[RMDB]
An RNA of 207 nucleotides, treated with DMS and 2A3 and read out base by base. Source: RMDB library M2RFPK, as collected in RNAgym. DMS (dimethyl sulfate) methylates the pairing face of unpaired adenines and cytosines.
RNA sequence: GGGAACGACUCGAGUAGAGUCGAAAAGGAACUGGAUGUCAUCACGUUGUUGCAGUACCAGAUGGCAUCUUAAAUCCGAUCUGCAAAUAAGCAUGUAGAAAGCUGAUGUGGGCUUUAGCUGGACGGGGGAAUACAGGCAACUUCGGUUGCCUGUAAAGGAUGCUAAGCUAUUCGUAGCUUAGCAUCCAAAAGAAACAACAACAACAAC
Reactivity to DMS in 0.01 (KOAc 150mM, MgCl2 10mM, bicine 150mM(pH8.5), 24C), signal-to-noise 1, nucleotides 027 to 156: g000g020a040a170c120u030g010g000a010u000g010u000c010a050u000c010a240c260g040u000u020g010u010u000g020c010a110g020u000a090c030c040a090g000a070u010g010g000c000a040u000c020u000u020a050a110a150u000c000c020g020a140u020c050u010g010c030a020a090a120u000a100a110g000c040a080u010g020u010a070g010a080a050a040g000c000u010g000a090u000g040u000g020g030g000c040u000u000u000a010g000c040u000g000g030a060c060g010g010g010g030g000a040a190u010a010c010a020g000g020c000a010a010c010u000u000c290g030g030u000u000g000c010c000u000g010u000a000a020a190
Reactivity to 2A3 in 0.01 (KOAc 150mM, MgCl2 10mM, bicine 150mM(pH8.5), 24C), signal-to-noise 1, nucleotides 027 to 156: g040g000a010a130c070u060g010g000a010u000g010u000c000a010u010c030a000c130g080u120u090g060u030u060g050c100a040g040u140a090c070c010a080g000a010u000g000g000c020a000u000c010u000u030a070a100a000u040c010c000g000a050u000c000u000g020c000a000a000a200u100a170a000g000c060a040u120g040u070a030g090a080a150a020g010c050u040g040a050u110g070u080g000g000g060c030u090u050u160a050g020c060u090g010g020a040c000g030g010g000g000g040a030a010u010a000c000a000g020g000c000a000a000c000u000u040c120g050g000u000u000g020c000c010u000g000u000a000a000a000
2A3 adducts were read by reverse transcription with SuperScript II with manganese. DMS adducts were read by reverse transcription with MarathonRT. For 2A3, 833 sequencing reads were counted.